[RMDB]
The data come from the RNA Mapping Database (RMDB), library TTRINS. Chemical mapping of a 177-nucleotide RNA with DMS and 2A3.

RNA sequence: GGGAACGACUCGAGUAGAGUCGAAAAGAUAUGGAUCUGGAACUACAAGGAACAUGUGCGAAGAACCUGUUAAUUUCGGAAACGAAAUUAACAGGGGAGCACUUUGUACUUGCCAGAUCCUAAGUCAGAUAUGCUAACACUUCGGUGUUAGCAUAUCAAAAGAAACAACAACAACAAC
Reactivity to DMS in 0.01 (KOAc 150mM, MgCl2 10mM, bicine 150mM(pH8.5), 24C), signal-to-noise 1, nucleotides 027 to 126: g000a070u000a260u030g010g000a000u020c010u010g000g000a110a010c180u050a300c000a000a000g000g000a100a110c120a020u000g000u000g000c000g020a130a140g000a170a150c000c000u000g010u000u000a000a000u000u000u000c000g000g000a030a070a160c020g000a000a020a010u000u000a000a000c000a000g000g000g000g010a130g040c000a000c020u000u020u000g010u000a170c000u000u000g020c000c000a000g000a010u000c000c020u000a020a060g000u000c040a160
Reactivity to 2A3 in 0.01 (KOAc 150mM, MgCl2 10mM, bicine 150mM(pH8.5), 24C), signal-to-noise 1, nucleotides 027 to 126: g040a050u020a030u130g000g000a010u000c000u040g000g030a120a120c160u300a040c300a020a000g070g000a240a030c010a090u060g030u020g010c070g260a300a090g040a230a090c000c000u000g000u000u000a000a000u040u010u050c010g050g020a000a060a030c010g000a000a000a010u000u000a000a010c020a010g000g010g000g000a030g010c000a000c000u050u000u080g030u000a000c020u010u010g000c020c000a000g040a000u030c000c000u000a010a000g050u030c040a000